This 177-nucleotide RNA was probed chemically with DMS and 2A3. It was measured as part of the RMDB libraries RFM100 and RFMREP.
RNA sequence: GGGAACGACUCGAGUAGAGUCGAAAACAGACGUAAAAAUGGGAAACGCCUCCUAAAUAUAUUGUACAAACUUGCAAUGCUGGAAUUCCCCACCUGUGGUGCAGGCAGGUGUGGAGUUUCAGGUGCACAGAUGCAUAAUCUUCGGAUUAUGCAUCUGAAAAGAAACAACAACAACAAC
Reactivity to DMS in 0.01 (KOAc 150mM, MgCl2 10mM, bicine 150mM(pH8.5), 24C), signal-to-noise 3, nucleotides 027 to 126: c090a080g010a090c070g010u010a020a060a070a090a110u000g010g000g000a050a110a140c070g000c040c030u000c010c010u010a040a060a140u030a130u030a070u000u000g010u000a110c140a130a070a130c110u020u020g000c000a020a040u000g010c020u000g000g000a010a020u000u000c000c000c010c000a000c000c000u000g010u000g030g010u000g010c070a030g000g000c010a000g000g000u000g030u000g010g000a020g000u000u000u000c000a010g010g010u000g000c020a180
Reactivity to 2A3 in 0.01 (KOAc 150mM, MgCl2 10mM, bicine 150mM(pH8.5), 24C), signal-to-noise 9, nucleotides 027 to 126: c020a010g140a050c040g070u130a050a040a050a090a150u190g020g010g030a070a140a030c080g070c010c020u020c020c010u030a020a150a020u190a040u050a040u070u170g070u070a070c090a080a170a070c080u040u020g000c020a040a110u150g250c010u000g010g010a000a010u000u000c000c000c000c000a000c000c000u010g020u040g050g140u170g060c050a060g170g000c000a000g000g020u000g000u010g010g000a000g000u000u000u000c000a000g000g010u010g000c000a000